[RMDB]
RNA sequence: GGGAACGACUCGAGUAGAGUCGAAAAGAAAGGCAGCCAAUGCAGCCCACGAAGCCAGUCGAAGCAUGCUUUUGCAUGCCGCCCACGACUGAGGGCAGCUGCGGCACUGAGGGCAGCUGCCGAAAGAGAUAUGCCUACGGUUCGCCGUAGGCAUAUCAAAAGAAACAACAACAACAAC
Reactivity to 2A3 in 0.01 (KOAc 150mM, MgCl2 10mM, bicine 150mM(pH8.5), 24C), signal-to-noise 2, nucleotides 027 to 126: g030a020a140a010g070g000c020a000g020c010c130a060a040u140g040c040a040g020c000c020c000a010c050g100a120a000g080c030c060a000g020u010c030g010a050a000g000c000a020u040g020c000u120u260u270u300g000c040a000u010g000c000c010g050c000c040c010a080c030g010a000c010u080g050a120g050g000g020c010a000g030c000u020g000c000g020g070c060a020c060u070g080a190g000g080g000c010a010g000c000u000g000c020c020g010a020a030a010g090a020
Reactivity to DMS in 0.01 (KOAc 150mM, MgCl2 10mM, bicine 150mM(pH8.5), 24C), signal-to-noise 3, nucleotides 027 to 126: g030a080a080a130g000g010c010a050g010c070c110a080a100u010g000c070a090g020c000c000c010a110c140g000a110a130g010c100c010a000g010u000c010g010a270a090g000c000a000u000g010c000u000u040u000u000g030c020a030u000g010c000c100g000c090c030c150a300c050g010a020c020u000g000a140g000g010g000c020a060g000c010u010g010c100g030g010c090a100c120u000g000a060g000g000g010c030a020g000c020u000g000c000c010g020a030a060a080g000a150